[RMDB]
RNA sequence: GGGAACGACUCGAGUAGAGUCGAAAAUUUGAGUCUGGCGGAUGAUCCAAGUGUGGAACGCACCAUUACCCCGCGUGUCGCGCUCACCUUGGCCGAACACUUGGCCUUUGAUUGUGAUAAGCACGUCGAAACUGUGUUAUUUCGAUAACACAGUUUCAAAAGAAACAACAACAACAAC
Reactivity to DMS in 0.01 (KOAc 150mM, MgCl2 10mM, bicine 150mM(pH8.5), 24C), signal-to-noise 8, nucleotides 027 to 126: u010u010u010g010a080g010u010c030u000g000g020c050g010g000a090u010g000a100u010c030c040a060a080g010u000g030u000g000g010a090a080c080g010c060a070c050c050a080u010u010a190c070c010c000c100g010c090g000u010g010u000c060g020c110g000c190u000c020a030c050c060u000u000g000g010c060c010g000a060a100c230a060c210u010u010g000g000c020c020u000u000u000g000a140u000u010g010u000g010a090u010a080a150g010c030a040c070g010u000c140
Reactivity to 2A3 in 0.01 (KOAc 150mM, MgCl2 10mM, bicine 150mM(pH8.5), 24C), signal-to-noise 5, nucleotides 027 to 126: u060u020u070g020a020g030u020c050u060g040g030c040g080g020a080u090g020a030u000c020c040a130a090g110u100g040u060g170g060a050a020c050g020c050a020c020c020a030u030u170a140c000c000c030c000g010c010g000u030g040u060c050g010c010g010c090u010c000a030c000c000u020u020g010g000c010c000g070a100a010c140a020c150u020u070g020g000c020c000u030u030u070g090a130u060u080g020u000g020a050u020a110a030g010c010a000c040g040u040c060